This 207-nucleotide RNA was probed chemically with 2A3. For 2A3 the reverse transcriptase was SuperScript II with manganese. Values are in units of 0.01, from 0 to 300, in steps of 10.

RNA sequence: GGGAACGACUCGAGUAGAGUCGAAAAUAGCGAAGUAGGAUUUUAUGCGUCAAGUGUUCACAGGCUGGGGAGUCGCCGUGAAACGAAAAGCAGAAAGCGUGCUGCUUCCGAUAUAAUUUCCGCACCCAUAAGAAGUCUCUGUUCGCAGAGACUUCAACCUACUGAGCUACUUCGGUAGCUCAGUAGGAAAAGAAACAACAACAACAAC
Reactivity to 2A3 in 0.01 (KOAc 150mM, MgCl2 10mM, bicine 150mM(pH8.5), 24C), signal-to-noise 2, nucleotides 027 to 156: u120a020g030c060g010a090a000g030u080a060g010g090a040u000u010u020u050a040u090g010c020g040u070c100a150a090g040u120g120u170u030c010a010c070a100g020g000c040u120g030g040g000g040a040g070u080c020g020c000c000g010u020g010a060a020a000c020g000a030a080a030a080g000c000a000g020a040a090a010g100c070g030u060g070c020u000g000c000u030u000c000c000g010a000u010a020u010a180a090u020u010u040c020c000g000c030a070c040c010c000a030u040a110a090g010a000a000g000u000c000u010c000u000g050u050u050c170g010c060a010g000a010g000a000c010u000u000c000a000a000